[RMDB]
RNA sequence: GGGAACGACUCGAGUAGAGUCGAAAAAAAGAGUAUUUUGAGAGAUUGCUUGCAGCUUAUCCAGAAAUGAGAAUUUAUAGCACGGACUAUGAGGGUAAGACUAUUGCGUGCAUGAUUGAUUUGCCUACGUAAUAAAUCGUUUCGACGAUUUAUUACGAAAAGAAACAACAACAACAAC
Reactivity to 2A3 in 0.01 (KOAc 150mM, MgCl2 10mM, bicine 150mM(pH8.5), 24C), signal-to-noise 4, nucleotides 027 to 126: a020a000a020g110a040g030u120a110u070u130u100u070g070a080g000a010g010a020u010u020g000c000u030u090g000c010a010g020c000u020u020a010u000c000c000a050g130a080a100a040u170g020a080g080a130a080u100u150u070a040u050a020g000c060a030c300g040g080a030c040u020a020u060g060a070g020g020g000u020a020a000g020a030c050u160a180u150u120g000c000g010u010g000c010a010u020g010a030u010u060g000a000u010u000u090g030c000c010u040a050
Reactivity to DMS in 0.01 (KOAc 150mM, MgCl2 10mM, bicine 150mM(pH8.5), 24C), signal-to-noise 7, nucleotides 027 to 126: a040a050a070g000a130g010u000a040u010u000u000u000g000a300g010a060g000a150u000u000g010c020u000u000g020c010a060g010c010u000u000a010u010c010c020a220g010a040a080a040u000g000a170g010a130a070u000u000u000a050u010a030g020c020a160c230g010g020a100c040u000a010u000g010a130g000g010g010u000a010a020g000a100c110u000a100u010u000g010c030g010u000g000c020a020u000g000a200u000u000g000a270u000u000u000g000c020c010u010a100

Chemical mapping of a 177-nucleotide RNA with 2A3 and DMS. The 2A3 profile rests on 5,027 reads. The DMS profile rests on 7,437 reads. The RNA was probed in 150 mM KOAc, 10 mM MgCl2 and 150 mM bicine (pH 8.5) at 24 C. The data come from the RNA Mapping Database (RMDB), library OK2TST.